[RMDB]
RNA sequence: GGGAACGACUCGAGUAGAGUCGAAAAUGUCCAAUUGGCAGCUUUUGGGUCUAUCCAAGCAAGUCCACAAGGACUAACCAUUAUUAUGCAAGCCUUAAUUAUUGGAGAGACAAAGCUAAUAAGGUUAGUGGGACAGGAAGUUCGCUUCCUGUCCCACAAAAGAAACAACAACAACAAC
Reactivity to 2A3 in 0.01 (KOAc 150mM, MgCl2 10mM, bicine 150mM(pH8.5), 24C), signal-to-noise 2, nucleotides 027 to 126: u120g030u000c000c000a010a060u000u160g000g000c010a000g010c020u150u140u090u150g000g000g040u180c130u230a040u010c000c000a000a000g050c030a030a030g010u000c010c110a150c060a070a040g020g010a060c000u000a000a000c000c000a050u000u000a000u080u010a000u170g090c120a110a090g000c000c000u180u110a190a170u030u120a100u090u210g050g020a010g000a010g000a070c040a090a090a010g030c000u000a000a000u030a100a000g030g000u060u000a070

This 177-nucleotide RNA was probed chemically with 2A3. The data come from the RNA Mapping Database (RMDB), library OK1LIB. Conditions: 150 mM KOAc, 10 mM MgCl2 and 150 mM bicine (pH 8.5), 24 C.